The record gives the reactivity of an RNA of 177 nucleotides to 2A3 and DMS. The RNA was probed in 150 mM KOAc, 10 mM MgCl2 and 150 mM bicine (pH 8.5) at 24 C.
[RMDB]
RNA sequence: GGGAACGACUCGAGUAGAGUCGAAAAUGAAAUAGGGUGUGCAAGACGCUGAUCUUGCCAUGAUCUGGAACUUUAGUGCUGAGGUCCGAGUUCCAGGGUAUCAUGUCGGACCUUAGCACUAAUUAAACACCAAUGUACAGUUCGCUGUACAUUGGUGAAAAGAAACAACAACAACAAC
Reactivity to 2A3 in 0.01 (KOAc 150mM, MgCl2 10mM, bicine 150mM(pH8.5), 24C), signal-to-noise 5, nucleotides 027 to 126: u160g020a010a040a040u190a070g090g010g020u020g080u140g030c010a010a000g000a010c040g120c300u180g060a300u010c000u000u010g000c000c000a010u090g030a070u030c030u060g040g060a030a060c020u040u020u020a020g000u010g020c010u000g010a000g000g000u000c010c010g020a010g020u110u050c020c010a010g070g000g010u130a080u230c090a080u150g100u080c010g000g000a010c000c000u000u000a000g000c010a000c000u000a010a000u000u040a030a020a010
Reactivity to DMS in 0.01 (KOAc 150mM, MgCl2 10mM, bicine 150mM(pH8.5), 24C), signal-to-noise 5, nucleotides 027 to 126: u010g000a060a080a100u010a110g010g000g030u010g010u000g010c020a010a010g000a030c010g030c250u020g000a100u000c000u000u000g000c000c020a030u000g000a080u000c030u000g000g010a100a140c120u000u000u000a000g020u000g010c010u000g000a010g010g010u000c000c010g010a060g010u000u000c140c060a070g000g010g010u000a050u000c090a080u000g010u000c000g010g000a030c010c000u000u000a010g000c000a000c000u000a010a010u010u000a060a070a140